[RMDB]
RNA sequence: GGGAACGACUCGAGUAGAGUCGAAAAUUACCACGGCGUUUCAAUACCAAUUUCCGUGGCGCGCAUCCAAAAAUCACCGUCGAAGGUGCGCCCGACGUUGCGACAAACCCGCGUGCGCAUUGCGGUGAAAACAACGUGGUUCGAUCCGGCCGAAAGGGUGGAUCGUUCUCUUCGGAGAACGAUCCACAAAAGAAACAACAACAACAAC
Reactivity to 2A3 in 0.01 (KOAc 150mM, MgCl2 10mM, bicine 150mM(pH8.5), 24C), signal-to-noise 2, nucleotides 027 to 156: u110u030a040c020c000a000c000g000g000c000g030u110u060u050c150a120a100u150a140c020c040a160a210u000u030u130c060c070g040u180g000g030c000g000c010g030c060a100u120c060c050a060a090a070a080a050u220c040a110c040c030g150u240c110g100a240a060g070g000u020g000c000g040c000c000c000g050a070c020g000u060u030g070c030g050a050c160a030a100a160c030c020c000g000c010g070u130g100c130g000c060a090u050u150g000c010g020g030u010g030a070a050a010a000c080a000a010c040g020u030g000g000u050u080c020g010a000u030c010c010g120g020c040c020g120a020a070a050g200g010